[RMDB]
RNA sequence: GGGAACGACUCGAGUAGAGUCGAAAAGAUAUGGACUACUCGUUGUGCCUAUGAAGAAUAGACUUUGAUAGUCGGAAACGACUAUCAAAGUCUAUUUGGAGGCGCACAACGAGGUAGUCCUAAGUCACAUAGACGUGUUCUUCGGAACACGUCUAUGAAAAGAAACAACAACAACAAC
Reactivity to DMS in 0.01 (KOAc 150mM, MgCl2 10mM, bicine 150mM(pH8.5), 24C), signal-to-noise 2, nucleotides 027 to 126: g020a060u010a300u000g000g000a020c000u000a020c000u000c000g010u000u000g020u000g000c000c040u000a130u000g020a300a240g000a000a020u020a000g000a000c000u000u000u000g010a000u000a010g020u010c000g020g000a160a110a170c010g000a000c000u000a010u010c020a000a000a000g000u000c000u000a000u000u000u000g020g000a280g000g000c300g020c000a000c000a000a020c020g000a010g010g000u000a000g000u000c000c000u000a020a070g010u010c030a300
An RNA of 177 nucleotides, treated with DMS and read out base by base. The DMS profile rests on 1,488 reads.